[RMDB]
RNA sequence: GGGAACGACUCGAGUAGAGUCGAAAAGAUAUGGAGCGCAAUCGAGCAGUGCCUAUGAAGUCGGAAACGAUGGAGGCACUGACCCUCGGUUUACGCUCCUAAGUCAAAACUGUGGUUCGCCACAGAACCACAUUUUGAGGUUCGCCUCAAAAUGUGGAAAAGAAACAACAACAACAAC
Reactivity to DMS in 0.01 (KOAc 150mM, MgCl2 10mM, bicine 150mM(pH8.5), 24C), signal-to-noise 4, nucleotides 027 to 126: g000a040u020a300u010g000g000a000g020c000g010c300a030a020u010c000g040a020g000c010a020g020u000g010c000c000u000a180u000g010a100a190g000u000c000g000g010a160a110a150c020g010a020u000g000g000a010g000g020c000a000c000u000g000a040c220c240c030u000c000g020g000u000u000u010a050c010g020c000u000c000c000u010a000a060g010u000c020a070a050a080a100c040u000g020u000g010g010u000u020c220g020c020c020a010c040a020g000a060a170
Reactivity to 2A3 in 0.01 (KOAc 150mM, MgCl2 10mM, bicine 150mM(pH8.5), 24C), signal-to-noise 4, nucleotides 027 to 126: g030a000u090a030u180g010g010a000g000c000g000c050a000a020u000c000g020a000g040c010a010g010u010g020c000c000u300a300u300g030a020a010g010u020c010g030g040a100a050a040c000g000a010u030g020g020a010g000g000c000a000c000u010g010a020c060c030c000u020c010g000g010u040u040u060a040c000g000c000u000c000c000u000a020a010g010u000c010a000a010a150a200c010u000g000u020g010g050u050u100c260g070c090c020a020c020a010g000a020a040